[RMDB]
RNA sequence: GGGAACGACUCGAGUAGAGUCGAAAAAAACAAUCAUAGGUACUUUUGGGGCUUUUAACGAAAACUCAUUCGCUUUAGUUUCGCUAUUACUUGAUGUAGUUCUACCUUUUGUUGUAACAAUGACACCGAACUUGAUUGUGUUCGCACAAUCAAGUUCAAAAGAAACAACAACAACAAC
Reactivity to 2A3 in 0.01 (KOAc 150mM, MgCl2 10mM, bicine 150mM(pH8.5), 24C), signal-to-noise 2, nucleotides 027 to 126: a000a000a000c030a030a040u070c010a050u110a020g090g000u020a120c070u140u050u120u120g000g000g000g000c050u060u090u030u190a060a080c030g090a120a060a000a060c030u050c070a010u040u000c000g070c090u030u000u030a070g080u000u070u020c000g000c000u040a040u190u030a150c000u000u020g010a010u110g050u000a000g000u000u000c110u050a130c000c000u070u200u080u000g000u000u000g000u000a080a150c080a030a110u300g070a010c000a070c080c050
Reactivity to DMS in 0.01 (KOAc 150mM, MgCl2 10mM, bicine 150mM(pH8.5), 24C), signal-to-noise 1, nucleotides 027 to 126: a010a010a080c090a000a000u000c120a160u010a050g000g010u010a060c070u020u000u010u000g020g000g000g000c050u040u000u000u000a110a030c070g000a050a010a070a100c160u010c100a040u000u000c080g000c060u000u000u000a050g000u000u040u000c020g000c030u000a030u000u000a000c000u000u000g000a020u010g020u010a070g000u000u000c080u010a080c060c050u010u000u000u070g000u000u000g000u020a080a170c090a050a120u050g010a030c110a090c210c180